Chemical mapping of a 177-nucleotide RNA with 2A3 and DMS.
It was measured as part of the RMDB library M2PK50.
Conditions: 150 mM KOAc, 10 mM MgCl2 and 150 mM bicine (pH 8.5), 24 C.
Reactivities are given for positions 27 through 126.
RNA sequence: GGGAACGACUCGAGUAGAGUCGAAAAACAAUCUGGUUCGCCAGAUUGUCAAUGUCUUCGUAAAAUCCUUGGAAGACUGUAUAUAUAGAAUAAAGGUCGAAAGUACCUGUGCUUUCGAGCACAGGAAAGAAUACCUCUUAUUCGUAAGAGGUAUUCUAAAAGAAACAACAACAACAAC
Reactivity to 2A3 in 0.01 (KOAc 150mM, MgCl2 10mM, bicine 150mM(pH8.5), 24C), signal-to-noise 6, nucleotides 027 to 126: a000c000a000a010u000c000u000g000g050u050u040c100g030c060c010a000g000a010u000u010g000u010c010a010a090u100g000u000c000u020u020c020g180u050a000a010a090a200u040c020c010u030u060g070g000a010a010g000a000c010u000g020u000a120u000a030u010a010u030a120g070a140a070u210a300a180a010g020g010u020c040g080a120a100a030g050u060a090c000c000u000g000u000g000c000u070u090u150c300g060a010g000c010a000c010a000g000g000a010a030
Reactivity to DMS in 0.01 (KOAc 150mM, MgCl2 10mM, bicine 150mM(pH8.5), 24C), signal-to-noise 8, nucleotides 027 to 126: a020c000a000a010u000c000u000g000g000u000u010c220g020c000c000a010g010a010u000u000g000u000c100a100a070u000g010u000c000u000u000c000g010u010a030a010a030a140u010c010c000u000u010g010g010a020a010g000a020c000u000g000u010a090u010a130u010a200u010a150g010a130a100u010a070a100a030g000g010u000c240g000a110a060a080g000u010a110c010c000u000g010u000g000c000u000u000u010c160g010a020g010c000a010c000a000g000g000a020a030